[RMDB]
RNA sequence: GGGAACGACUCGAGUAGAGUCGAAAAUUACUAGGGGAUCUUCAUGUCCUGCAGCACCGGGUCCUGUCCUUCUUCAGCAGCCAUGGGUCGUGCUGCCCGGCAGGGUCCCACUCUGCAGCCUGGGUUCGUGACACCCUGGGGGCGGCGAAUGAGGCUCACCUUAGGUACGUUUCGACGUACCUAAGGUAAAAGAAACAACAACAACAAC
Reactivity to 2A3 in 0.01 (KOAc 150mM, MgCl2 10mM, bicine 150mM(pH8.5), 24C), signal-to-noise 1, nucleotides 027 to 156: u180u090a040c040u080a040g000g030g010g000a030u050c030u080u060c110a090u160g060u110c000c030u020g010c000a010g030c030a030c090c140g050g000g000u000c000c000u020g140u170c020c020u120u110c060u170u110c060a030g020c000a010g000c000c050a120u190g100g000g100u080c060g050u050g010c000u020g000c020c020c010g000g030c000a000g000g000g040u070c000c010c010a050c000u020c030u010g000c040a030g000c000c030u030g000g020g000u040u050c040g030u110g070a020c000a050c050c010c000u030g030g000g000g010g010c020g000g010c000g040a060a080u130g030a070g030g000c000u000c030
The record gives the reactivity of an RNA of 207 nucleotides to 2A3.
The RNA was probed in 150 mM KOAc, 10 mM MgCl2 and 150 mM bicine (pH 8.5) at 24 C.
For 2A3 the reverse transcriptase was SuperScript II with manganese.
The 2A3 profile rests on 824 reads.
The data come from the RNA Mapping Database (RMDB), library OK3TST.